[RMDB]
RNA sequence: GGGAACGACUCGAGUAGAGUCGAAAAGUACCUGUCGGUGCUGGCGUGUGCAAAGCUCGGGGCGAUCGCCGUCAUGGCCGACGGCAAUCUUCCGAUCGCAGCCAUCGAACGAUUCUGUCAGAUCACCCUCCCGAAAUUUCUUCGGAAAUUUCGGGAGAAAAGAAACAACAACAACAAC
Reactivity to 2A3 in 0.01 (KOAc 150mM, MgCl2 10mM, bicine 150mM(pH8.5), 24C), signal-to-noise 1, nucleotides 027 to 126: g020u050a020c020c000u040g070u100c070g010g050u070g040c000u040g030g000c000g080u140g000u080g020c050a010a120a090g030c040u010c030g000g000g020g060c140g020a030u020c010g000c040c000g000u010c010a100u160g280g030c080c100g010a000c000g000g000c020a020a040u020c020u020u010c050c020g050a050u100c050g000c030a010g020c050c000a020u060c050g060a060a060c010g000a030u010u070c010u090g050u040c010a020g060a140u140c020a050c020c030